An RNA of 177 nucleotides, treated with DMS and 2A3 and read out base by base. 2A3 adducts were read by reverse transcription with SuperScript II with manganese. The reactions ran in a buffer of 150 mM KOAc, 10 mM MgCl2 and 150 mM bicine (pH 8.5), at 24 C. The DMS profile rests on 1,335 reads. It was measured as part of the RMDB library M2PK50.

RNA sequence: GGGAACGACUCGAGUAGAGUCGAAAAUCAUGCACGUUCGCGUGCAUGAAAAGGCGGCGAGUAUCGCUCAGCCGCGCGCUACAGCGCGCAGCGCAGCUGGAAAAAGAUGAAUCUUCGGAUUCAUCAAUCCUAUCACCACGUUCGCGUGGUGAUAGGAAAAAGAAACAACAACAACAAC
Reactivity to DMS in 0.01 (KOAc 150mM, MgCl2 10mM, bicine 150mM(pH8.5), 24C), signal-to-noise 2, nucleotides 027 to 126: u000c010a000u000g000c000a020c000g000u000u020c240g010c020g040u000g000c000a000u000g000a010a030a110a150g000g030c000g010g020c010g000a140g020u010a060u000c150g000c010u010c050a160g030c010c010g040c020g030c050g010c040u010a080c240a120g010c020g010c020g030c010a060g000c040g010c070a050g000c020u000g000g000a140a100a060a120a100g000a010u000g000a020a020u000c000u020u010c250g000g000a020u000u010c000a000u000c010a020a090
Reactivity to 2A3 in 0.01 (KOAc 150mM, MgCl2 10mM, bicine 150mM(pH8.5), 24C), signal-to-noise 1, nucleotides 027 to 126: u030c010a000u000g040c000a000c000g000u060u030c170g010c010g120u010g010c000a000u000g020a000a000a000a000g090g000c030g030g000c080g000a000g000u090a120u270c090g020c030u000c020a020g000c000c020g020c000g000c010g040c000u190a190c080a060g000c010g000c000g020c030a060g040c060g050c040a030g000c010u050g060g080a090a100a000a000a020g010a000u000g000a010a000u000c010u030u050c220g050g000a000u010u000c000a000u000c000a010a010